[RMDB]
RNA sequence: GGGAACGACUCGAGUAGAGUCGAAAAUUUUUCUCUCCAAGGCGAGGCAGGGAGGUAGACCUGGAUAACUUGUAAGGUUCCUUUCUAACCUGAGUGUUCUGUGAACUUCUGACUUCAGGUGAACAUGAUGACCUUGGCAGAACACAUUAUUGAAGCAAUUAUACGUACUCUUCGGAGUACGUAUAAUAAAAGAAACAACAACAACAAC
Reactivity to DMS in 0.01 (KOAc 150mM, MgCl2 10mM, bicine 150mM(pH8.5), 24C), signal-to-noise 3, nucleotides 027 to 156: u000u000u000u000u000c030u000c020u000c020c020a030a060g010g020c030g010a070g040g030c050a130g000g010g030a030g030g010u000a090g040a070c020c020u000g010g030a150u000a120a140c170u000u000g020u010a170a060g020g010u000u000c060c000u000u000u000c030u010a120a040c030c000u000g000a170g020u000g020u000u000c010u030g020u000g020a060a070c070u020u020c060u000g000a110c080u000u000c030a060g000g020u020g010a060a060c060a100u000g010a230u000g010a050c010c010u000u000g000g020c170a050g010a050a070c140a040c060a080u000u000a080u000u010g000a040a070g020c090a080
Reactivity to 2A3 in 0.01 (KOAc 150mM, MgCl2 10mM, bicine 150mM(pH8.5), 24C), signal-to-noise 4, nucleotides 027 to 156: u060u040u010u100u020c010u010c000u000c010c000a010a010g010g000c010g030a020g060g040c030a000g000g030g030a020g020g050u080a090g060a040c020c000u040g080g080a140u090a180a170c130u170u220g080u220a070a040g000g000u020u060c010c000u030u010u020c020u040a040a080c010c010u030g030a050g070u040g010u070u000c070u030g090u040g100a100a110c070u160u050c050u170g080a100c000u020u020c000a030g110g010u050g000a030a040c060a070u180g020a050u070g050a100c000c010u010u030g010g000c030a000g050a100a000c070a000c010a100u110u230a090u130u230g070a050a010g070c020a030